[RMDB]
RNA sequence: GGGAACGACUCGAGUAGAGUCGAAAAGAUAUGGACAUGCUGCAUAUCCACCUCAUUAGGGAGCUAACAUUCGGAAACGAAUGCUAGCAUCGAUCUAAGAGGUGGAUAUGCAGCAUGUCCUAAGUCACCAUAGGUACUGGUUCGCCAGUACCUAUGGAAAAGAAACAACAACAACAAC
Reactivity to DMS in 0.01 (KOAc 150mM, MgCl2 10mM, bicine 150mM(pH8.5), 24C), signal-to-noise 2, nucleotides 027 to 126: g000a040u010a300u000g010g010a020c000a010u000g010c000u000g000c000a020u000a010u000c010c000a010c000c000u010c010a130u000u000a010g010g010g030a040g030c000u000a000a020c000a010u000u000c010g010g010a170a110a250c010g020a010a020u000g020c010u000a010g010c000a170u000c180g000a050u010c000u000a000a010g000a030g020g020u000g000g000a000u010a010u000g010c000a000g000c000a000u000g000u000c000c000u000a020a070g010u000c050a270